[RMDB]
RNA sequence: GGGAACGACUCGAGUAGAGUCGAAAAUAACAGGAGAGUAGAUGAUUCGCGUUAAGUGUCUGUGAAUGGGAUGUCGUCACACAACGAAGCGAGAGCGCGGUGAAUCAUUGCAUCCGCUCCAAAACAAGAUCCGGUAUUGAUUCGUCAAUACCGGAUCAAAAGAAACAACAACAACAAC
Reactivity to 2A3 in 0.01 (KOAc 150mM, MgCl2 10mM, bicine 150mM(pH8.5), 24C), signal-to-noise 1, nucleotides 027 to 126: u090a000a010c020a020g000g010a010g000a000g020u040a000g010a020u020g010a020u010u020c010g000c010g030u010u040a050a010g000u010g020u030c010u050g020u010g020a030a020u030g000g030g000a020u020g040u090c060g010u030c010a000c000a000c000a060a050c040g060a030a000g030c000g020a070g010a000g070c020g000c020g000g050u010g000a010a020u010c020a010u020u040g000c000a000u000c000c010g000c000u010c000c000a040a070a020a030c070a030a040
Reactivity to DMS in 0.01 (KOAc 150mM, MgCl2 10mM, bicine 150mM(pH8.5), 24C), signal-to-noise 3, nucleotides 027 to 126: u010a090a090c170a140g010g000a030g000a050g020u000a300g000a050u000g010a060u000u000c000g010c040g000u020u000a040a110g020u020g010u000c190u000g010u000g000a030a040u000g010g000g000a010u000g000u010c220g010u010c040a000c020a030c100a030a050c100g010a090a060g020c050g010a180g010a130g010c010g040c090g010g000u010g000a030a010u000c050a050u010u000g000c020a010u010c000c010g000c010u000c000c020a060a020a080a080c230a060a120